Chemical mapping of a 177-nucleotide RNA with 2A3 and DMS. High 2A3 reactivity points to a flexible backbone, as in loops and unpaired stretches.
[RMDB]
RNA sequence: GGGAACGACUCGAGUAGAGUCGAAAAGAUAUGGAGCGUGCUAGGGAGCCUGUCGGAAACGAUAAAGGCGAGGAUCUAGUCACGCUCCUAAGUCAAAUCUCUCAUUUGCUUCGGCAAAUGAGAGAAAUCAGCUAUACUUGUUCGCAAGUAUAGCUGAAAAAGAAACAACAACAACAAC
Reactivity to 2A3 in 0.01 (KOAc 150mM, MgCl2 10mM, bicine 150mM(pH8.5), 24C), signal-to-noise 2, nucleotides 027 to 126: g020a010u040a040u130g000g000a000g010c010g000u010g010c010u010a020g000g000g020a010g000c010c000u010g030u000c000g000g040a060a060a050c000g010a010u120a240a300a020g010g000c010g080a220g000g000a010u010c000u000a000g030u160c020a000c010g000c010u000c000c000u000a000a000g010u000c010a060a000a080u000c010u000c000u010c000a000u000u000u000g000c000u060u060c200g180g000c000a010a010a000u000g010a010g000a000g000a000a000a000
Reactivity to DMS in 0.01 (KOAc 150mM, MgCl2 10mM, bicine 150mM(pH8.5), 24C), signal-to-noise 3, nucleotides 027 to 126: g000a040u000a300u000g000g010a020g030c000g020u000g000c010u010a010g000g000g010a030g020c000c000u000g020u000c010g000g000a110a080a210c010g010a020u010a050a100a020g020g010c000g010a040g000g000a020u000c010u000a000g010u000c010a020c000g010c000u000c000c000u000a010a050g000u000c050a100a150a140u000c000u000c000u010c000a010u000u000u000g010c010u000u030c170g030g000c000a000a000a010u000g010a010g000a010g000a000a030a060